The record gives the reactivity of an RNA of 207 nucleotides to 2A3. The RNA was probed in 150 mM KOAc, 10 mM MgCl2 and 150 mM bicine (pH 8.5) at 24 C.
[RMDB]
RNA sequence: GGGAACGACUCGAGUAGAGUCGAAAAAUCAGAGAGCGCUAUCAUGCAAACUAGGAUUGUCUGCUCAUGCACAGAACCAACUACCGAUAACUAACAGUGCAUGAAGGUUAGUUAUUCCAUAUUAAUUAAAACUCGUAAUUCUUCGGAAUUACGAGAAUCGUGUAGUGGACUUCGGUCCACUACACGAAAAAGAAACAACAACAACAAC
Reactivity to 2A3 in 0.01 (KOAc 150mM, MgCl2 10mM, bicine 150mM(pH8.5), 24C), signal-to-noise 1, nucleotides 027 to 156: a000u020c040a000g140a040g010a030g040c060g030c030u070a130u160c070a030u260g010c030a070a080a060c060u070a060g170g000a140u020u050g050u120c050u010g000c000u000c000a000u000g000c000a030c000a040g060a070a010c040c020a000a140c010u120a120c030c060g030a000u050a070a000c000u000a050a000c000a010g020u000g020c000a000u020g000a000a000g020g000u000u000a000g000u010u000a080u070u140c000c000a070u070a100u150u270a140a100u100u100a050a100a120a110c000u000c020g000u000a000a010u000u000c000u000u060c190g150g000a000a000u030u000a010c000g000a000g000a000a010